[RMDB]
Chemical mapping of a 177-nucleotide RNA with DMS and 2A3. The 2A3 profile rests on 1,633 reads. Values cover nucleotides 27 to 126. It was measured as part of the RMDB library OK2TRN. The RNA was probed in 150 mM KOAc, 10 mM MgCl2 and 150 mM bicine (pH 8.5) at 24 C.
RNA sequence: GGGAACGACUCGAGUAGAGUCGAAAAGACGCGGCGGCGGAGGUGGCGUGGGCGCUCGGCGCGCGGGGACGCAACGGUGAGGGUUUGGUCAGCCCCAUGCAUUGACCUGCGCCGGGCACGUGCCGGACAGACUCAACCAUUUCGAUGGUUGAGUCUGAAAAGAAACAACAACAACAAC
Reactivity to DMS in 0.01 (KOAc 150mM, MgCl2 10mM, bicine 150mM(pH8.5), 24C), signal-to-noise 1, nucleotides 027 to 126: g010a100c070g010c080g020g030c020g020g000c040g020g010a060g010g020u000g010g010c050g060u000g010g000g010c140g010c010u000c020g010g010c040g000c040g020c100g010g000g010g020a090c170g010c060a040a080c120g010g020u010g000a110g000g000g000u000u000u020g000g010u000c100a210g000c010c010c010c050a080u020g030c050a100u010u010g000a130c030c020u000g010c020g010c000c010g010g000g000c030a060c070g000u000g000c050c030g030g000a260
Reactivity to 2A3 in 0.01 (KOAc 150mM, MgCl2 10mM, bicine 150mM(pH8.5), 24C), signal-to-noise 1, nucleotides 027 to 126: g070a010c040g020c050g120g030c040g010g000c100g040g030a030g020g000u080g000g020c080g000u080g000g020g030c120g010c010u000c020g010g000c010g050c050g000c030g000g020g000g040a010c060g010c030a020a100c140g050g020u110g040a200g030g020g070u000u040u040g050g000u030c000a010g000c000c000c060c000a040u150g010c030a030u050u130g070a060c010c030u000g020c010g060c000c010g000g030g030c000a010c030g010u060g050c020c000g000g000a030